[RMDB]
Conditions: 150 mM KOAc, 10 mM MgCl2 and 150 mM bicine (pH 8.5), 24 C. The record gives the reactivity of an RNA of 207 nucleotides to DMS and 2A3. Reactivities are given for positions 27 through 156. The DMS profile rests on 17,848 reads. For 2A3 the reverse transcriptase was SuperScript II with manganese.
RNA sequence: GGGAACGACUCGAGUAGAGUCGAAAACGCAUGCGAAAGCAUGCGGCUAUGCUAAUGCAUGGCGACCGCGAUCAAGUAGAGCAGGCGGCGAUAGUGGUUAUUAUUCCGCUAUCGAUUACCAGUGUCUGUUAUUAUUCAGAUACAUGGACCUCUACGACAUAUAAUGCUCAUUCGUGAGCAUUAUAUGAAAAGAAACAACAACAACAAC
Reactivity to DMS in 0.01 (KOAc 150mM, MgCl2 10mM, bicine 150mM(pH8.5), 24C), signal-to-noise 6, nucleotides 027 to 156: c010g030c000a010u000g020c010g010a150a200a230g030c010a000u000g000c020g010g020c020u000a020u000g020c000u000a100a170u000g010c010a020u000g000g010c020g020a140c030c020g020c060g000a160u000c140a130a180g020u000a010g000a030g030c050a150g040g030c030g020g010c050g020a020u000a010g030u000g010g020u010u000a140u010u000a300u000u000c000c000g000c000u000a000u000c000g010a090u000u000a060c010c000a220g010u000g010u000c000u000g010u000u000a140u010u010a170u000u000c000a020g010a030u000a010c020a100u000g020g010a150c110c010u000c010u000a020c010g030a270
Reactivity to 2A3 in 0.01 (KOAc 150mM, MgCl2 10mM, bicine 150mM(pH8.5), 24C), signal-to-noise 9, nucleotides 027 to 156: c000g000c000a000u000g000c000g040a060a010a010g000c000a000u000g000c000g000g000c000u000a000u000g010c030u200a300a080u300g000c000a000u000g000g000c020g050a070c010c000g000c020g010a060u140c110a170a030g000u000a000g000a010g020c180a110g160g000c010g000g010c000g000a000u000a000g010u010g040g060u090u030a130u210u060a130u300u050c000c000g000c010u000a000u000c000g000a010u010u070a040c000c000a000g000u000g010u000c000u010g100u040u040a190u230u070a150u120u090c000a000g000a000u000a010c090a220u020g020g010a080c000c000u000c000u000a000c000g010a000